[RMDB]
This 177-nucleotide RNA was probed chemically with 2A3 and DMS. Conditions: 150 mM KOAc, 10 mM MgCl2 and 150 mM bicine (pH 8.5), 24 C. 2A3 adducts were read by reverse transcription with SuperScript II with manganese. It was measured as part of the RMDB libraries RFM100 and RFMREP. Values cover nucleotides 27 to 126.

RNA sequence: GGGAACGACUCGAGUAGAGUCGAAAACAGGGAAUCCGGUGUGCGGGGUAAGCCUGUGCACCGUGAGGGAGACAACCCAGAGUUAGGUUAAGGUCCCAAAGUGCGAGCUAAGUGCGAUUGAAGGUGGUAACGCUAUUAUAUUCGUAUAAUAGCGUUAAAAAGAAACAACAACAACAAC
Reactivity to 2A3 in 0.01 (KOAc 150mM, MgCl2 10mM, bicine 150mM(pH8.5), 24C), signal-to-noise 9, nucleotides 027 to 126: c030a020g020g010g080a030a080u020c010c010g000g000u000g000u010g000c010g010g010g010g090u280a100a090g300c000c000u010g000u010g010c000a000c000c000g000u030g010a010g010g030g010a050g010a020c060a050a030c030c000c020a030g030a010g100u180u200a030g010g030u030u050a110a030g030g030u030c000c010c000a020a060a000g060u060g030c030g010a050g020c050u080a130a020g040u040g070c030g040a050u020u120g070a080a030g080g040u080g020g030
Reactivity to DMS in 0.01 (KOAc 150mM, MgCl2 10mM, bicine 150mM(pH8.5), 24C), signal-to-noise 9, nucleotides 027 to 126: c090a110g010g000g010a180a110u000c030c000g000g010u000g020u000g010c000g000g010g010g010u030a110a150g010c000c000u000g010u000g000c000a010c000c000g000u020g010a090g000g000g010a150g010a110c130a080a110c030c010c020a120g000a100g010u010u010a080g010g010u010u010a100a120g000g000u000c010c010c020a040a080a080g010u010g000c040g010a080g010c060u010a080a080g010u010g000c060g000a090u010u010g010a080a080g000g010u010g010g010